The record gives the reactivity of an RNA of 207 nucleotides to 2A3. Values are in units of 0.01, from 0 to 300, in steps of 10. The 2A3 profile rests on 2,691 reads. The reactions ran in a buffer of 150 mM KOAc, 10 mM MgCl2 and 150 mM bicine (pH 8.5), at 24 C. Values cover nucleotides 27 to 156.
RNA sequence: GGGAACGACUCGAGUAGAGUCGAAAAUAGCGAAGUAGGUUUUUAUGCGUCAAGUGUUCACAGGCUGGGGAGUCGCCGUGAAACGAAAAGCAGAAAGCGUGCUGCUUACGAUAUAAUUUCCGCACCCAUAAGAAGUCUCUGUUCGCAGAGACUUCAACUAGUCUCUUGGUUUCGACCAAGAGACUAGAAAAGAAACAACAACAACAAC
Reactivity to 2A3 in 0.01 (KOAc 150mM, MgCl2 10mM, bicine 150mM(pH8.5), 24C), signal-to-noise 3, nucleotides 027 to 156: u110a010g000c030g030a080a020g040u110a080g050g040u000u030u040u040u050a090u090g010c000g020u040c070a090a080g030u060g070u200u010c010a010c070a110g020g020c040u100g040g000g050g020a060g120u120c010g000c010c020g010u020g010a030a010a000c010g020a010a090a010a000g000c000a000g030a030a070a010g110c100g060u080g040c010u000g000c000u010u010a030c030g010a010u010a010u020a120a090u070u010u030c000c000g000c040a040c030c040c000a030u060a160a070g000a000a000g000u000c000u000c000u000g030u050u080c240g000c080a000g000a000g000a010c010u000u000c000a000a000